[RMDB]
An RNA of 207 nucleotides, treated with 2A3 and read out base by base.
Values are in units of 0.01, from 0 to 300, in steps of 10.
Source: RMDB library OK3TST, as collected in RNAgym.
The RNA was probed in 150 mM KOAc, 10 mM MgCl2 and 150 mM bicine (pH 8.5) at 24 C.
RNA sequence: GGGAACGACUCGAGUAGAGUCGAAAACGCAAACUUAGCUUCACUAGGCGCGGAUGUGUUCGCCGAUUUCAGAACCGUACACCCCGAAUAUUUCGGCGGCGAUGGAUGGGACAACGAACCCGGCUUUUGGGCGCAAAAAGGCGUAACAGUCAUGGAACGUCCUUGUUUCAUUCGUGAAACAAGGACGAAAAGAAACAACAACAACAAC
Reactivity to 2A3 in 0.01 (KOAc 150mM, MgCl2 10mM, bicine 150mM(pH8.5), 24C), signal-to-noise 1, nucleotides 027 to 156: c050g020c100a070a020a050c080u040u020a030g010c010u160u070c040a100c190u030a040g000g000c050g030c100g090g070a140u080g080u030g030u110u070c020g040c000c010g040a070u070u120u150c080a050g020a050a010c020c010g020u150a040c040a080c050c000c000c050g020a070a070u300a130u100u130u030c040g000g000c030g010g030c050g020a050u080g000g000a000u010g000g000g020a030c030a090a050c070g000a000a100c000c000c010g050g000c000u100u030u100u050g050g020g000c060g000c010a000a020a000a030a170g000g000c000g020u020a080a000c080a050g050u120c040a080u190g030g090a020a070